[RMDB]
Chemical mapping of a 207-nucleotide RNA with 2A3 and DMS.
Conditions: 150 mM KOAc, 10 mM MgCl2 and 150 mM bicine (pH 8.5), 24 C.
For DMS, 6,228 sequencing reads were counted.
2A3 adducts were read by reverse transcription with SuperScript II with manganese.
RNA sequence: GGGAACGACUCGAGUAGAGUCGAAAAUAUAUGUGCAUCUGUGGACCCGGGUAUCAGCGGAGACCUGAUGGAGAAGGCUGUGUAGGUAAGAGGAUCCCUGUGGAAGGAGCUUUGAGUGCAUCAGAAGUGACAGUGGACAGAAGGAACCUGGGCUCUGUGAUACUGACUAAUUCGUUAGUCAGUAUCAAAAAGAAACAACAACAACAAC
Reactivity to 2A3 in 0.01 (KOAc 150mM, MgCl2 10mM, bicine 150mM(pH8.5), 24C), signal-to-noise 4, nucleotides 027 to 156: u200a010u040a040u070g070u050g040c020a050u020c060u080g040u080g050g030a090c020c030c020g030g010g000u120a110u120c050a030g050c040g080g040a050g040a100c010c020u070g020a070u080g040g000a040g010a090a040g020g000c020u030g030u020g040u130a020g020g050u040a090a040g020a030g080g010a040u030c020c010c000u020g010u040g070g030a050a030g020g020a010g020c000u060u060u050g030a020g030u080g020c020a040u060c020a060g100a150a030g030u040g060a030c020a020g030u060g070g010a030c020a030g090a080a050g050g000a020a030c030c010u040g020g000g010c020u000c020u030g060
Reactivity to DMS in 0.01 (KOAc 150mM, MgCl2 10mM, bicine 150mM(pH8.5), 24C), signal-to-noise 3, nucleotides 027 to 156: u010a090u000a100u010g020u010g020c040a080u000c030u000g000u000g020g000a090c030c060c000g010g010g020u000a060u000c050a070g040c070g000g030a160g010a110c080c030u000g000a110u000g000g000a140g020a060a090g020g020c060u010g040u000g020u010a060g000g010u000a070a070g010a140g010g010a090u000c040c030c020u000g030u050g030g010a090a110g010g000a090g010c010u020u000u020g010a120g030u000g010c040a070u000c060a110g010a080a070g010u010g000a080c060a080g050u000g020g000a160c050a080g010a090a070g010g000a080a080c040c030u000g010g000g000c010u000c020u020g010